[RMDB]
RNA sequence: GGGAACGACUCGAGUAGAGUCGAAAAGCUGAGUAUAGGAGGUUAGUUCAUUCUCGUAUGCAUGAUUGGACAAAUUAAAAUCUCAAUUUGGAUCAGGGCCUCCCUCCAGCGACGGCCGAACAUACAAGCGUAGACGUAGUUUCGACUACGUCUACGCAAAAGAAACAACAACAACAAC
Reactivity to DMS in 0.01 (KOAc 150mM, MgCl2 10mM, bicine 150mM(pH8.5), 24C), signal-to-noise 1, nucleotides 027 to 126: g000c010u000g000a050g030u010a020u000a080g020g030a030g010g030u000u010a070g010u000u000c070a050u010u000c020u030c070g000u010a070u010g020c120a080u010g000a050u000u000g020g010a030c030a060a030a040u010u000a000a110a060a050u000c050u000c150a040a060u000u000u000g020g030a100u010c100a040g000g000g000c040c060u010c020c010c050u030c040c020a050g020c030g030a030c110g020g010c010c020g000a020a050c110a040u010a120c140a060a170
Reactivity to 2A3 in 0.01 (KOAc 150mM, MgCl2 10mM, bicine 150mM(pH8.5), 24C), signal-to-noise 1, nucleotides 027 to 126: g020c000u000g050a020g040u100a060u070a270g010g050a000g000g000u030u010a020g070u110u080c030a010u070u010c010u030c020g190u260a070u190g100c120a030u090g000a030u010u110g010g010a000c000a000a070a010u100u080a040a120a030a160u030c060u000c120a000a180u120u070u110g030g010a040u010c000a020g020g020g000c000c000u030c000c000c000u080c000c020a010g000c000g030a020c030g030g000c030c030g030a030a000c020a020u220a020c020a070a010
An RNA of 177 nucleotides, treated with DMS and 2A3 and read out base by base.
The DMS profile rests on 799 reads.
The RNA was probed in 150 mM KOAc, 10 mM MgCl2 and 150 mM bicine (pH 8.5) at 24 C.
Reactivities are rounded to 0.1 and cut off at 0 and 3.
The 2A3 profile rests on 690 reads.
For 2A3 the reverse transcriptase was SuperScript II with manganese.